RNA sequence: GGGAACGACUCGAGUAGAGUCGAAAAAAGAUAUGGAGUCUGCUAGUCGCCCAUGGUCGAAGAACAAGCCUCGGAAACGAGGCUUGGGAGACCAUGUGCGCGACUUGGACCAGACUCCUAAGUCAAACAUAGUUAAGACCUUCGGGUCUUAACUAUGAAAAGAAACAACAACAACAAC
Reactivity to DMS in 0.01 (KOAc 150mM, MgCl2 10mM, bicine 150mM(pH8.5), 24C), signal-to-noise 3, nucleotides 027 to 126: a100a090g000a090u000a300u000g010g010a030g020u000c000u010g020c030u000a030g010u000c000g010c010c000c000a020u000g000g010u000c000g010a140a150g000a140a220c000a020a030g010c010c000u000c000g000g020a110a080a160c000g010a010g010g030c000u000u000g000g000g000a110g010a020c000c000a000u000g020u000g020c170g010c000g010a000c000u000u010g040g010a110c300c010a000g000a030c000u000c000c000u000a010a100g010u000c010a130a070a290
Source information: The data come from the RNA Mapping Database (RMDB), library TTRDES. The record gives the reactivity of an RNA of 177 nucleotides to DMS. DMS adducts were read by reverse transcription with MarathonRT. Conditions: 150 mM KOAc, 10 mM MgCl2 and 150 mM bicine (pH 8.5), 24 C.